Conditions: 150 mM KOAc, 10 mM MgCl2 and 150 mM bicine (pH 8.5), 24 C. The record gives the reactivity of an RNA of 177 nucleotides to DMS. It was measured as part of the RMDB library TTRDES. The DMS profile rests on 987 reads. For DMS the reverse transcriptase was MarathonRT.
RNA sequence: GGGAACGACUCGAGUAGAGUCGAAAAGAUAUGGACGAAGCAACGACGAUAAGCUGAGCAUCGGAAACGAUGCCAGCUUUUGACGUCGACUUCGUCCUAAGUCAAAAGAAGCUGUUCGCAGCUUCAACUUGGACAUGUUCUUCGGAACAUGUCCAAGAAAAGAAACAACAACAACAAC
Reactivity to DMS in 0.01 (KOAc 150mM, MgCl2 10mM, bicine 150mM(pH8.5), 24C), signal-to-noise 1, nucleotides 027 to 126: g000a040u000a250u030g010g000a040c040g000a030a000g000c110a210a060c040g030a010c010g000a220u000a030a010g000c030u000g000a180g040c000a010u000c010g000g000a070a050a090c000g010a030u000g000c010c010a010g000c000u000u000u000u000g010a160c120g000u010c010g000a130c000u000u000c000g030u000c000c000u000a000a080g000u020c040a070a060a160a130g000a020a000g030c000u010g000u010u030c240g030c000a030g000c000u010u000c020a080a160